[RMDB]
RNA sequence: GGGAACGACUCGAGUAGAGUCGAAAAGAUAUGGACGUGUAACAAGCAACAGCUCCAGGGUCGGAAACGACCCUAAGGAGACAUGCUUGGAGAAACGUCCUAAGUCAAAAGACCACUUCGGUGGUCAGAUGAUAUAGGUGUUCGCACCUAUAUCAUCAAAAGAAACAACAACAACAAC
Reactivity to DMS in 0.01 (KOAc 150mM, MgCl2 10mM, bicine 150mM(pH8.5), 24C), signal-to-noise 7, nucleotides 027 to 126: g000a040u010a300u000g000g000a010c000g000u000g010u000a180a300c010a000a010g010c000a040a110c230a250g000c000u010c000c010a060g000g030g020u000c000g010g000a120a110a200c010g000a010c000c000c000u000a030a060g010g010a020g010a030c140a140u000g000c010u000u000g000g000a090g010a090a210a010c010g010u000c000c000u000a020a090g010u000c030a070a070a150a140g000a010c000c000a010c000u000u020c220g030g020u000g000g010u000c000a030
Reactivity to 2A3 in 0.01 (KOAc 150mM, MgCl2 10mM, bicine 150mM(pH8.5), 24C), signal-to-noise 4, nucleotides 027 to 126: g030a020u080a050u130g000g000a000c010g010u020g010u030a070a040c010a020a000g000c020a020a130c060a280g040c000u000c000c000a010g000g000g000u000c010g030g010a080a080a080c020g010a010c010c010c000u010a080a060g000g010a000g060a010c010a030u090g000c000u020u010g000g000a020g030a010a040a000c010g000u000c000c000u000a040a010g020u000c010a050a030a070a170g000a000c010c000a000c010u060u100c300g180g000u010g000g000u000c010a010

An RNA of 177 nucleotides, treated with DMS and 2A3 and read out base by base.
For 2A3, 26,849 sequencing reads were counted.
For 2A3 the reverse transcriptase was SuperScript II with manganese.
DMS adducts were read by reverse transcription with MarathonRT.
For DMS, 9,564 sequencing reads were counted.